[RMDB]
RNA sequence: GGGAACGACUCGAGUAGAGUCGAAAACCUCGGUCCGCAAGGGAAUCUGUGAACGGAUCGAGGAAAAGGACGAGUGCAUCACAGAUUCCCUUGGCACUUGUCCGUGGAGAUGCGAAAGCAUUUCCACCCAGCUAGUUGGCUUCGGCCAACUAGCUGGAAAAGAAACAACAACAACAAC
Reactivity to 2A3 in 0.01 (KOAc 150mM, MgCl2 10mM, bicine 150mM(pH8.5), 24C), signal-to-noise 1, nucleotides 027 to 126: c000c000u000c040g040g020u080c000c000g050c040a050a040g000g110g000a020a050u040c030u090g040u000g050a050a000c020g040g060a020u020c010g040a030g000g050a080a050a010a000g030g010a010c000g010a000g030u150g020c040a050u070c050a050c010a030g070a030u030u050c010c000c000u040u060g050g000c000a040c050u000u070g010u070c010c000g000u010g010g000a000g000a000u000g000c010g060a100a000a000g000c010a020u000u020u000c000c000a000c000